[RMDB]
RNA sequence: GGGAACGACUCGAGUAGAGUCGAAAAGAUCUGCGCCGAUCAGAAACGCUAGCAAACAGCCCGCAUCAUGUCGUCUCCUAACUUCGACGUGGUGAAAUACUGAGCUUAUGCGAGUAAGCCUGUUAGCAAUAGAUCAGAACGUUCGCGUUCUGAUCAACCUUUGGCCCUAGUUCGCUAGGGCCAAAGGAAAAGAAACAACAACAACAAC
Reactivity to 2A3 in 0.01 (KOAc 150mM, MgCl2 10mM, bicine 150mM(pH8.5), 24C), signal-to-noise 2, nucleotides 027 to 156: g030a050u050c020u120g040c090g030c060c060g030a120u110c070a020g030a020a090a020c030g010c030u030a020g010c020a020a000a160c020a090g010c020c010c030g050c020a000u000c000a000u020g000u010c020g010u040c020u090c090c070u110a150a220c090u050u020c000g000a000c010g000u000g000g010u020g020a010a000a090u160a010c090u030g020a030g030c000u010u040a000u060g030c020g030a020g020u000a040a030g010c000c000u030g000u100u030a010g000c010a070a120u060a180g000a000u000c000a000g010a020a000c010g000u060u030c240g000c000g030u010u010c010u000g000a000u000c000a000a000
Reactivity to DMS in 0.01 (KOAc 150mM, MgCl2 10mM, bicine 150mM(pH8.5), 24C), signal-to-noise 1, nucleotides 027 to 156: g000a230u000c070u010g000c100g040c010c060g000a100u020c060a110g000a110a130a010c040g010c010u040a080g010c010a020a050a130c120a080g000c070c000c010g050c020a080u040c010a020u010g030u010c000g000u000c050u000c180c020u000a090a110c110u000u000c040g040a070c000g080u000g020g000u040g010a010a100a080u000a160c080u000g030a080g000c000u000u000a170u000g000c090g000a210g000u000a070a170g000c120c060u000g000u000u000a150g060c020a110a120u000a120g000a030u000c000a020g020a030a020c010g030u000u020c240g040c020g040u000u010c020u000g010a000u020c010a070a010
The record gives the reactivity of an RNA of 207 nucleotides to 2A3 and DMS. The RNA was probed in 150 mM KOAc, 10 mM MgCl2 and 150 mM bicine (pH 8.5) at 24 C. Values cover nucleotides 27 to 156. Values are in units of 0.01, from 0 to 300, in steps of 10. As a SHAPE reagent, 2A3 marks flexible, mostly unpaired nucleotides at the ribose 2'-OH. The 2A3 profile rests on 1,260 reads.